[RMDB]
RNA sequence: GGGAACGACUCGAGUAGAGUCGAAAAGCCGACGAGCGCAAGCUGCCCACCAGCCCCGCCUUGCCGUACUCGCUGGGCAUGCUGGAGGAGAAGCUGAAGGCGAUGUACAAGUGUGUGACGGAGGGCACUUACAUGGGGGUUUCGACCCCCAUGUAAGAAAAGAAACAACAACAACAAC
Reactivity to DMS in 0.01 (KOAc 150mM, MgCl2 10mM, bicine 150mM(pH8.5), 24C), signal-to-noise 4, nucleotides 027 to 126: g020c020c010g020a080c090g010a090g020c050g030c080a100a070g010c010u000g010c050c010c010a130c050c020a050g010c020c160c080c090g020c010c010u000u000g010c030c100g010u010a070c120u010c100g000c000u000g000g010g000c030a050u010g010c000u010g000g000a180g000g000a210g020a090a080g010c010u000g000a220a190g010g020c010g010a050u000g000u000a070c090a080a090g010u010g020u000g000u010g000a070c050g020g000a070g000g000g000c050a180